This 177-nucleotide RNA was probed chemically with DMS and 2A3. Values cover nucleotides 27 to 126. 2A3 adducts were read by reverse transcription with SuperScript II with manganese.

RNA sequence: GGGAACGACUCGAGUAGAGUCGAAAAAUUUGUGUCAGUCCUGCCGCGAGAGCGAGAGACGCCAUAAAGGGAGCGCGGGCUCUGAAGUACCGGCUAAAGCGUCCAGCAGGCGAGUGUGGGGGCUAAAUUAGCCAUAUAGGUUCGCCUAUAUGGCUAAAAAAGAAACAACAACAACAAC
Reactivity to DMS in 0.01 (KOAc 150mM, MgCl2 10mM, bicine 150mM(pH8.5), 24C), signal-to-noise 4, nucleotides 027 to 126: a070u020u020u010g010u020g010u010c060a100g000u010c020c010u000g030c020c010g010c030g000a170g010a150g020c020g020a100g010a280g010a050c020g000c030c060a110u020a060a090a100g010g000g000a060g010c020g000c030g000g000g010c000u010c160u030g020a060a080g010u010a050c040c010g000g000c030u000a060a070a160g010c010g000u000c010c020a110g010c040a040g010g000c050g000a070g000u000g030u010g010g000g000g000g000c070u020a040a040a150
Reactivity to 2A3 in 0.01 (KOAc 150mM, MgCl2 10mM, bicine 150mM(pH8.5), 24C), signal-to-noise 3, nucleotides 027 to 126: a000u100u110u110g110u040g070u050c040a060g030u030c030c000u040g010c000c000g000c000g050a020g000a010g090c040g020a030g020a020g000a060c010g010c010c010a090u230a160a150a080g140g050g040a100g010c070g000c020g030g030g000c010u000c100u160g040a130a000g000u040a160c000c040g000g040c020u040a080a120a000g000c010g000u000c000c020a010g010c020a020g020g010c040g000a020g010u070g000u080g000g020g000g000g000c000u000a050a080a040